The record gives the reactivity of an RNA of 207 nucleotides to 2A3. The data come from the RNA Mapping Database (RMDB), library ARCHII. The 2A3 profile rests on 645 reads. The RNA was probed in 150 mM KOAc, 10 mM MgCl2 and 150 mM bicine (pH 8.5) at 24 C. 2A3 is a SHAPE reagent: it acylates the 2'-hydroxyl of flexible nucleotides of all four kinds.
RNA sequence: GGGAACGACUCGAGUAGAGUCGAAAAGAGACACGCAAAUUCGUUUGCAAAGAUCAUGGGAUGCUACAAUGUGGAGAGGAUAUUCAACGCCUAAAGUUCGUUCCCGUCUAUCGCAAGACACCAGUUACUGAACAUGUCCUGUUGGAAAGAGAACAUGCGAACGUUGACUGUUCGCAGUCAACGUUCGAAAAGAAACAACAACAACAAC
Reactivity to 2A3 in 0.01 (KOAc 150mM, MgCl2 10mM, bicine 150mM(pH8.5), 24C), signal-to-noise 1, nucleotides 027 to 156: g070a000g020a000c010a010c070g020c000a010a070a070u180u130c220g130u110u010u020g070c060a080a140a070g030a040u080c020a070u020g110g010g040a020u050g000c000u020a010c020a120a090u100g010u060g060g000a040g000a020g020g060a040u060a070u130u080c050a070a050c020g030c000c000u070a190a100a010g020u110u060c000g000u000u020c000c000c000g000u000c040u030a120u080c060g000c080a080a030g040a010c010a020c000c000a000g010u100u040a090c040u050g000a110a010c000a020u010g000u000c000c020u020g000u040u020g040g020a040a040a000g020a020g010a010a010c000a040u050g030